[RMDB]
This 207-nucleotide RNA was probed chemically with DMS and 2A3. As a SHAPE reagent, 2A3 marks flexible, mostly unpaired nucleotides at the ribose 2'-OH. Conditions: 150 mM KOAc, 10 mM MgCl2 and 150 mM bicine (pH 8.5), 24 C.
RNA sequence: GGGAACGACUCGAGUAGAGUCGAAAAAAUCGUCGACGCAUCGAAGACGGUCCUGCCAUGAGACCGUAACGAGGACAUGUCGCCUCGAAUGGCGUCGGGGAGCCGGCAGCUUACCCCAAGGAUGAGCAAAAGAAUGAAACGUUCGCGUUUCAUUCAAGAGUCAUCAAUAGUUCGCUAUUGAUGACUCAAAAGAAACAACAACAACAAC
Reactivity to DMS in 0.01 (KOAc 150mM, MgCl2 10mM, bicine 150mM(pH8.5), 24C), signal-to-noise 1, nucleotides 027 to 156: a070a060u000c010g000u000c000g020a030c010g030c000a080u010c060g000a190a170g050a070c020g010g010u000c000c000u000g070c030c280a180u000g030a120g010a010c000c010g010u060a020a090c060g000a080g070g010a120c100a150u030g010u000c040g030c000c010u000c010g150a150a140u050g080g000c030g030u010c000g010g010g000g000a080g010c010c020g000g000c110a110g030c060u000u000a130c040c000c000c060a120a260g000g030a060u000g000a080g000c000a140a050a200a160g000a040a000u010g010a010a040a010c020g000u000u010c290g050c080g030u000u010u000c010a040u000u010c010a040a080
Reactivity to 2A3 in 0.01 (KOAc 150mM, MgCl2 10mM, bicine 150mM(pH8.5), 24C), signal-to-noise 5, nucleotides 027 to 156: a000a010u130c110g120u010c010g070a010c000g020c030a050u120c090g110a070a010g090a030c000g000g010u000c020c000u090g200c060c030a180u150g020a070g010a130c010c000g010u030a050a040c020g010a020g010g020a040c040a130u210g060u070c090g050c020c010u020c000g040a070a080u170g050g000c000g000u010c010g020g010g000g000a020g030c030c030g060g030c010a020g030c020u040u080a070c000c000c010c030a010a050g070g020a090u110g030a030g040c060a020a050a080a070g010a000a000u010g000a000a000a010c020g000u080u070c200g030c010g120u010u030u000c010a000u000u000c000a000a010